[RMDB]
RNA sequence: GGGAACGACUCGAGUAGAGUCGAAAAGAUUGUUGAACCUCCUCCUUCGGCAUGGCACCACCUAUACAUGCCAUUGGCGCGUAUCACACGCAUUGCAAGACCGCGAGGCUUGAAACCGACACCAUCAUGUAUCGGAUGAAUUCGUUCAUCCGAUACAAAAAGAAACAACAACAACAAC
Reactivity to DMS in 0.01 (KOAc 150mM, MgCl2 10mM, bicine 150mM(pH8.5), 24C), signal-to-noise 2, nucleotides 027 to 126: g000a110u010u000g000u010u000g010a130a130c060c010u000c010c000u000c020c040u000u010c080g020g000c080a010u020g000g000c050a090c100c030a050c100c070u000a110u010a060c110a040u000g020c020c010a100u000u000g000g030c080g030c020g020u000a070u000c120a070c100a070c090g000c060a120u000u000g000c040a070a040g010a090c050c060g000c070g000a130g000g000c010u010u000g000a060a050a070c050c020g000a040c110a060c040c050a050u000c110a130